[RMDB]
RNA sequence: GGGAACGACUCGAGUAGAGUCGAAAACAGCGCGAUCAAAGCUGCCGCCCAUAUGACCAUCAACCGGCGCAAUUGUGAAACUCCAGCUGCCUUUGCUGCAUCCAUUUCGGCGGAAAUUCAGCGCAGCGACUAUAGAUUGGUUCGCCAAUCUAUAGUCAAAAGAAACAACAACAACAAC
Reactivity to DMS in 0.01 (KOAc 150mM, MgCl2 10mM, bicine 150mM(pH8.5), 24C), signal-to-noise 9, nucleotides 027 to 126: c060a070g010c030g020c080g010a090u000c130a120a100a160g010c030u000g010c020c040g000c020c020c030a080u000a060u000g010a070c070c030a050u010c080a070a090c100c060g010g010c040g010c060a080a070u000u000g010u010g010a080a090a110c080u000c050c050a070g010c030u000g010c040c070u000u000u000g020c020u000g010c110a100u000c050c030a080u000u000u000c060g020g010c060g000g000a040a040a090u000u010c050a070g010c070g010c040a080g010c100
Reactivity to 2A3 in 0.01 (KOAc 150mM, MgCl2 10mM, bicine 150mM(pH8.5), 24C), signal-to-noise 9, nucleotides 027 to 126: c020a020g020c020g010c020g080a090u140c130a080a080a060g020c030u030g020c020c010g020c000c010c010a050u110a090u080g040a030c020c010a040u080c030a040a060c030c030g040g000c020g000c040a050a110u110u110g040u050g090a120a060a030c030u030c020c020a030g010c020u040g030c000c010u090u090u070g000c010u020g000c010a040u020c030c010a030u040u060u070c040g040g000c020g010g050a030a070a050u180u110c030a040g020c010g000c050a010g050c030

The record gives the reactivity of an RNA of 177 nucleotides to DMS and 2A3. Conditions: 150 mM KOAc, 10 mM MgCl2 and 150 mM bicine (pH 8.5), 24 C. For 2A3, 34,749 sequencing reads were counted. 2A3 is a SHAPE reagent: it acylates the 2'-hydroxyl of flexible nucleotides of all four kinds. It was measured as part of the RMDB library OK2TST. Reactivities are rounded to 0.1 and cut off at 0 and 3.